RNA sequence: GGGAACGACUCGAGUAGAGUCGAAAACCAUUGAAGGCAAUGGAAUUGUAAUUCAAUAGAAUGAAAAAUUUCUUCAUUUGCUGCUGAAAUAAUUUUUCAUUUCGUUAUGUCAGCACAAUAUAGGCACGAUACUGACGCGGUUCGCCGCGUCAGUAUCAAAAGAAACAACAACAACAAC
Reactivity to 2A3 in 0.01 (KOAc 150mM, MgCl2 10mM, bicine 150mM(pH8.5), 24C), signal-to-noise 2, nucleotides 027 to 126: c000c000a010u000u020g060a220a000g060g000c060a010a030u210g160g030a070a210u190u040g100u060a000a060u090u000c050a180a000u040a130g070a050a000u000g100a040a070a010a010a010u000u000u110c000u020u100c020a000u150u220u110g060c200u000g000c000u000g040a000a000a000u110a060a000u000u000u050u160u220c130a140u060u080u140c050g000u010u090a040u030g070u090c000a020g060c020a060c000a090a000u250a010u100a210g140g000c080a000c100

Record summary: Source: RMDB library OK1LIB, as collected in RNAgym. An RNA of 177 nucleotides, treated with 2A3 and read out base by base. Reactivities are given for positions 27 through 126. 2A3 adducts were read by reverse transcription with SuperScript II with manganese. The reactions ran in a buffer of 150 mM KOAc, 10 mM MgCl2 and 150 mM bicine (pH 8.5), at 24 C.